RNA sequence: GGGAACGACUCGAGUAGAGUCGAAAAGAAAGAAAGAAGGUGCGGUUUCCUGUAAGUCGGCCCGUGUGGCUGAGGGUCACUCCGCGCGGGCACUGCAGCUUUUGUCAGCAUCUGGACACCUGCCUAAUGCAAUAGGAAUAUUCGUAUUCCUAUUGCAAAAAGAAACAACAACAACAAC
Reactivity to DMS in 0.01 (KOAc 150mM, MgCl2 10mM, bicine 150mM(pH8.5), 24C), signal-to-noise 9, nucleotides 027 to 126: g010a080a090a100g000a070a090a070g010a080a020g010g010u000g000c030g010g010u000u010u010c090c010u000g010u010a050a050g020u010c150g020g010c010c010c000g030u010g020u000g010g010c300u010g000a090g010g000g010u020c120a150c060u000c010c010g010c020g010c010g000g000g010c060a030c010u000g000c030a030g000c100u000u000u010u010g010u010c080a090g010c060a070u000c030u000g000g010a130c130a100c060c010u000g000c040c020u010a070a170
Reactivity to 2A3 in 0.01 (KOAc 150mM, MgCl2 10mM, bicine 150mM(pH8.5), 24C), signal-to-noise 9, nucleotides 027 to 126: g080a010a040a000g110a020a080a010g100a050a020g040g000u050g040c080g020g020u020u050u030c010c010u020g030u090a080a070g070u090c130g100g010c000c000c000g010u020g000u020g060g060c190u080g050a130g050g070g060u120c050a030c080u010c000c000g000c010g000c000g010g000g000c010a010c020u040g000c010a030g000c040u080u080u140u140g120u100c040a020g000c000a080u030c020u040g010g000a020c010a020c030c010u050g010c020c010u110a150a080
Description: An RNA of 177 nucleotides, treated with DMS and 2A3 and read out base by base. As a SHAPE reagent, 2A3 marks flexible, mostly unpaired nucleotides at the ribose 2'-OH. The data come from the RNA Mapping Database (RMDB), libraries RFM100 and RFMREP. For DMS the reverse transcriptase was MarathonRT. In probing experiments dimethyl sulfate is read out at A N1 and C N3, which are open when not base-paired. For 2A3 the reverse transcriptase was SuperScript II with manganese. The reactions ran in a buffer of 150 mM KOAc, 10 mM MgCl2 and 150 mM bicine (pH 8.5), at 24 C.